The data come from the RNA Mapping Database (RMDB), library OK1LIB. This 177-nucleotide RNA was probed chemically with DMS and 2A3. Conditions: 150 mM KOAc, 10 mM MgCl2 and 150 mM bicine (pH 8.5), 24 C.
RNA sequence: GGGAACGACUCGAGUAGAGUCGAAAAAGAGCGGUGAAUACAUCAGAGUCUGAAAAGACUCUUCAGCCGUCAUCGUUUAAUUAUUACUGGUUUAUUAAGACGGCUGAACAUAGACCAGUAGUUGAUAGAUACAGUUUGUAUUCGUACAGGCUGUAUCAAAAGAAACAACAACAACAAC
Reactivity to DMS in 0.01 (KOAc 150mM, MgCl2 10mM, bicine 150mM(pH8.5), 24C), signal-to-noise 8, nucleotides 027 to 126: a070g010a060g010c050g010g000u000g000a110a100u040a080c130a100u030c100a050g000a020g000u000c000u000g000a110a060a120a010g010a010c000u000c000u000u000c000a000g000c000c000g000u000c000a110u030c200g020u010u020u030a080a090u040u040a050u020u000a010c000u010g000g000u000u000u000a030u020u020a070a080g010a030c010g010g000c000u010g000a010a030c160a050u010a030g000a000c000c000a010g010u000a010g010u010u010g010a110u030a090
Reactivity to 2A3 in 0.01 (KOAc 150mM, MgCl2 10mM, bicine 150mM(pH8.5), 24C), signal-to-noise 9, nucleotides 027 to 126: a000g130a010g010c060g020g030u060g050a110a060u160a140c050a050u100c050a030g000a000g000u000c000u010g040a030a020a020a010g000a000c000u000c000u010u000c000a000g000c000c000g010u000c000a030u060c010g030u040u090u180a210a170u120u220a090u070u030a010c000u000g000g040u030u020u030a100u080u150a110a030g010a010c000g000g000c000u000g000a020a000c010a020u060a000g010a000c000c010a000g000u010a010g010u010u050g060a110u080a210